[RMDB]
The data come from the RNA Mapping Database (RMDB), library OK1LIB. An RNA of 177 nucleotides, treated with DMS and 2A3 and read out base by base.
RNA sequence: GGGAACGACUCGAGUAGAGUCGAAAAAACAAUCUCACACGUACACGCACUGAUGGAUCGGUAGAUAGUGUAGACUUCCACUCCAAAAUAGUAAAAUGAAUUUAAUUUUCAUCGUCAUAAAGAAACAACCUUCCCAUUCAUUCGUGAAUGGGAAGGUAAAAGAAACAACAACAACAAC
Reactivity to DMS in 0.01 (KOAc 150mM, MgCl2 10mM, bicine 150mM(pH8.5), 24C), signal-to-noise 2, nucleotides 027 to 126: a020a000c170a130a150u010c000u000c020a020c090a030c090g020u010a040c100a090c070g000c090a080c030u000g020a100u020g040g000a120u020c000g030g090u020a000g000a050u000a150g000u010g020u040a010g010a020c110u010u010c000c030a090c010u010c000c070a030a140a050a020u000a060g010u000a090a000a090a030u000g000a000a030u060u010u020a000a040u030u030u000u020c000a010u000c090g040u010c080a020u000a010a020a010g000a060a010a050c150a090
Reactivity to 2A3 in 0.01 (KOAc 150mM, MgCl2 10mM, bicine 150mM(pH8.5), 24C), signal-to-noise 4, nucleotides 027 to 126: a000a000c090a040a020u050c020u010c000a070c020a010c080g060u170a030c070a030c050g070c020a030c090u150g060a090u090g040g060a070u060c080g010g040u030a030g040a090u110a050g030u070g100u070a070g010a050c000u080u070c020c040a010c010u010c010c010a050a020a030a040u090a070g070u130a020a000a100a100u080g030a000a010u110u120u150a080a090u090u050u040u040c020a020u080c010g120u010c040a050u110a190a140a020g180a030a040a020c030a010
DMS adducts were read by reverse transcription with MarathonRT. DMS (dimethyl sulfate) methylates the pairing face of unpaired adenines and cytosines.